[RMDB]
RNA sequence: GGGAACGACUCGAGUAGAGUCGAAAAGAACGGCGGUUCCAGGAGCGAUAGUGGCACAAUUAGCAUAUUCUGUUUGACUAUGUAGAACGCAGAGGCAUAGGUGCCAUACCCACGCACUUGGGUGGGACCUAGUGAGGGUAUUCGUACCCUCACUAGGAAAAGAAACAACAACAACAAC
Reactivity to DMS in 0.01 (KOAc 150mM, MgCl2 10mM, bicine 150mM(pH8.5), 24C), signal-to-noise 6, nucleotides 027 to 126: g010a050a110c090g000g010c050g010g000u010u010c000c000a060g000g010a070g000c040g010a080u030a060g030u010g000g020c010a030c030a050a090u040u020a130g010c010a070u050a160u020u020c020u000g010u010u020u030g010a200c060u000a070u040g020u030a040g010a120a150c160g000c030a010g010a050g010g010c020a080u000a070g000g010u000g010c000c020a050u010a040c030c030c030a070c070g000c060a120c140u020u010g010g010g020u010g000g000g000a270
Reactivity to 2A3 in 0.01 (KOAc 150mM, MgCl2 10mM, bicine 150mM(pH8.5), 24C), signal-to-noise 9, nucleotides 027 to 126: g050a050a000c030g050g010c020g020g030u090u030c020c010a050g030g030a030g010c030g030a030u050a140g060u020g020g020c010a000c020a050a180u150u070a060g010c030a030u040a170u240u050c020u030g110u060u100u160g090a080c030u070a080u270g080u170a090g040a160a010c060g000c040a010g010a030g060g000c020a030u050a080g070g000u010g010c000c000a000u020a020c000c010c000a030c010g100c030a100c090u110u120g060g010g010u040g010g020g010a030